[RMDB]
RNA sequence: GGGAACGACUCGAGUAGAGUCGAAAAUGACAAUACUUCAGGAAUCGCAUAUGCAGGCCCAAUACCCAUAAUUUUCGGGUCAACGCCUACUGCCUUAUAACCAACGAAUCGUGCAAUAGGUGUCACGGCCAUUAUUGCCGUUCGCGGCAAUAAUGGCAAAAGAAACAACAACAACAAC
Reactivity to 2A3 in 0.01 (KOAc 150mM, MgCl2 10mM, bicine 150mM(pH8.5), 24C), signal-to-noise 3, nucleotides 027 to 126: u170g080a030c010a010a110u060a090c000u020u050c040a020g040g050a160a140u050c080g020c090a100u060a060u230g040c030a000g060g000c010c000c000a000a000u100a070c000c000c000a050u090a140a230u190u100u120u150c070g000g030g010u010c080a060a000c040g000c000c010u090a080c080u020g000c000c010u200u060a120u090a210a100c090c050a050a060c090g050a130a010u180c060g050u100g080c000a000a060u000a150g000g000u050g010u100c040a000c040g080

This 177-nucleotide RNA was probed chemically with 2A3. High 2A3 reactivity points to a flexible backbone, as in loops and unpaired stretches. The RNA was probed in 150 mM KOAc, 10 mM MgCl2 and 150 mM bicine (pH 8.5) at 24 C. The 2A3 profile rests on 1,262 reads.